Chemical mapping of a 207-nucleotide RNA with 2A3 and DMS. Values cover nucleotides 27 to 156.
RNA sequence: GGGAACGACUCGAGUAGAGUCGAAAACUUCCCUCCCCUGGAGAGCUGCUUCCUCUUGUUCUCGAGGGCCUUCCUUCUUCGGUGAUCCUGUCCCCUGAGAGGUCCCUUUCCGGGUCCGGAGUCUACCUCCAUCCGGUCCGUUCGGGCCCUCUUCGCCCUAACAUUAUACGUUCGCGUAUAAUGUUAGAAAAGAAACAACAACAACAAC
Reactivity to 2A3 in 0.01 (KOAc 150mM, MgCl2 10mM, bicine 150mM(pH8.5), 24C), signal-to-noise 3, nucleotides 027 to 156: c020u040u030c010c000c000u050c020c010c010c000u040g020g010a070g000a020g020c050u040g020c020u130u060c030c000u060c040u070u110g050u120u010c070u030c060g080a060g000g020g020c000c000u070u070c010c000u050u080c010u080u070c050g060g030u080g040a120u070c010c020u090g070u080c010c010c000c000u010g010a010g000a010g010g000u020c020c000c000u030u060u030c090c040g010g010g050u050c020c020g000g010a010g020u030c090u120a150c030c070u040c030c000a060u000c000c000g020g000u000c000c000g010u020u050c030g010g000g000c020c000c010u010c020u000u020c010g030c050c000
Reactivity to DMS in 0.01 (KOAc 150mM, MgCl2 10mM, bicine 150mM(pH8.5), 24C), signal-to-noise 1, nucleotides 027 to 156: c090u010u000c000c010c010u000c040c020c010c040u030g030g030a140g010a110g020c050u010g010c050u000u000c040c040u020c020u000u020g020u010u000c020u010c070g000a130g020g010g020c040c030u000u000c040c010u000u010c040u000u000c050g010g020u000g010a060u000c010c020u000g000u010c000c010c020c040u010g020a060g000a090g010g030u000c000c010c010u000u000u000c110c020g050g020g020u000c010c050g010g010a060g020u000c060u000a160c110c030u000c030c020a120u000c020c020g020g010u000c040c060g020u010u000c180g010g010g000c050c010c010u000c010u000u000c020g000c090c060
2A3 adducts were read by reverse transcription with SuperScript II with manganese. The data come from the RNA Mapping Database (RMDB), library VIROID.